[RMDB]
The record gives the reactivity of an RNA of 177 nucleotides to DMS and 2A3. For DMS the reverse transcriptase was MarathonRT. For 2A3 the reverse transcriptase was SuperScript II with manganese. Reactivities are rounded to 0.1 and cut off at 0 and 3. In probing experiments dimethyl sulfate is read out at A N1 and C N3, which are open when not base-paired.
RNA sequence: GGGAACGACUCGAGUAGAGUCGAAAAGGCUAGUUUGCUAUCGUAGUCGCUCUCGGAGGUGAAUUUGAGCUUUUGGCUACGGUACAGGAUCACCUCCAACUGUACCGAUAGCAUUUUUAUAGCCGAAGGGUGUCAGCUAGUUCGCUAGCUGGUACCCAAAAGAAACAACAACAACAAC
Reactivity to DMS in 0.01 (KOAc 150mM, MgCl2 10mM, bicine 150mM(pH8.5), 24C), signal-to-noise 8, nucleotides 027 to 126: g000g000c000u000a010g000u020u010u000g010c010u000a000u000c020g010u020a080g010u020c050g010c070u010c090u020c110g000g010a020g000g010u000g000a060a080u010u020u010g000a270g010c100u000u020u020u020g000g000c010u000a070c120g020g010u020a100c080a080g000g000a080u000c010a030c000c000u000c010c000a070a070c110u010g010u010a050c060c010g000a030u000a010g010c010a010u000u010u020u020u040a110u010a010g010c010c010g000a070a110
Reactivity to 2A3 in 0.01 (KOAc 150mM, MgCl2 10mM, bicine 150mM(pH8.5), 24C), signal-to-noise 9, nucleotides 027 to 126: g000g000c000u010a010g040u020u030u000g000c000u000a000u020c020g090u090a060g040u030c160g020c060u040c010u020c050g000g000a000g000g020u060g040a130a210u120u120u160g050a050g020c030u070u070u120u190g070g000c010u050a090c090g060g020u060a070c020a020g030g050a030u050c010a010c010c000u000c000c000a010a020c020u040g010u040a010c000c010g000a000u000a000g000c000a000u000u000u000u020u070a190u010a010g000c000c000g000a050a020